[RMDB]
RNA sequence: GGGAACGACUCGAGUAGAGUCGAAAAAGGCUGCCGUGUUCGCCGAAGCCCAGGCCGCAGUUGUCGCCCACGGCGUCGCCCGCCAUCUCGGUUACGACGUAGCUGAGCGCCACUUCACCGGCACGGGGGACUGCCAUCUAUUCGUAGAUGGCAGUCCAAAAGAAACAACAACAACAAC
Reactivity to 2A3 in 0.01 (KOAc 150mM, MgCl2 10mM, bicine 150mM(pH8.5), 24C), signal-to-noise 3, nucleotides 027 to 126: a000g030g010c030u050g030c030c000g060u060g040u070u090c030g020c030c020g060a060a030g000c020c010c010a000g100g000c000c020g020c080a050g020u060u100g100u120c030g020c020c000c000a040c010g010g000c030g040u030c020g010c000c010c000g020c040c010a150u060c040u040c040g000g030u040u080a050c080g020a020c060g190u030a020g020c040u000g020a010g020c040g000c000c010a010c050u130u090c050a060c050c020g010g000c030a050c050g010g000g010
Reactivity to DMS in 0.01 (KOAc 150mM, MgCl2 10mM, bicine 150mM(pH8.5), 24C), signal-to-noise 1, nucleotides 027 to 126: a060g030g000c000u000g000c050c000g000u040g040u000u000c070g000c040c000g010a080a230g000c000c000c050a130g000g000c020c030g020c040a070g000u000u000g010u000c040g020c030c030c080a130c080g010g060c000g000u000c000g000c120c000c030g000c090c070a080u010c050u000c000g000g000u040u000a220c040g000a100c060g000u000a030g020c060u020g000a130g000c150g020c000c020a020c020u000u070c030a070c200c060g000g040c000a090c010g070g010g000
Annotation
The record gives the reactivity of an RNA of 177 nucleotides to 2A3 and DMS. The 2A3 profile rests on 2,036 reads. 2A3 adducts were read by reverse transcription with SuperScript II with manganese. For DMS the reverse transcriptase was MarathonRT. It was measured as part of the RMDB library OK1LIB.